[RMDB]
RNA sequence: GGGAACGACUCGAGUAGAGUCGAAAACUCGGAGCCGCGCGCCGCCGUCGGAUCGCGGUGAGCCGAGCCGCGCGGGCGAACGCAACGGCCCGGGCCGAUGCGCGGUCCGCGCCGAGGCCGGUGCGCACCAUGAGGACGAGUUCGCUCGUCCUCAUGGAAAAGAAACAACAACAACAAC
Reactivity to 2A3 in 0.01 (KOAc 150mM, MgCl2 10mM, bicine 150mM(pH8.5), 24C), signal-to-noise 1, nucleotides 027 to 126: c010u000c000g080g150a060g090c140c100g000c050g000c000g000c020c000g020c020c010g250u040c010g050g030a070u190c030g000c030g000g060u050g070a010g010c010c010g020a000g020c020c000g000c010g000c010g030g000g000c040g030a100a020c070g020c170a060a080c040g090g000c000c050c000g050g140g000c090c070g060a090u210g040c070g010c030g040g000u010c000c000g000c020g000c000c030g000a010g010g000c080c050g000g040u040g010c010g000c000a030
Reactivity to DMS in 0.01 (KOAc 150mM, MgCl2 10mM, bicine 150mM(pH8.5), 24C), signal-to-noise 2, nucleotides 027 to 126: c010u000c010g050g000a170g030c100c130g060c020g030c060g010c020c000g010c100c010g000u000c020g010g000a110u020c060g000c010g010g000u010g020a100g000c030c010g020a100g010c050c040g000c090g010c010g000g110g010c030g000a070a170c080g000c080a080a080c090g020g000c000c060c140g020g010g020c060c050g000a060u000g020c030g020c110g030g010u010c000c000g000c030g000c000c080g000a120g000g030c150c040g020g020u000g010c030g020c030a220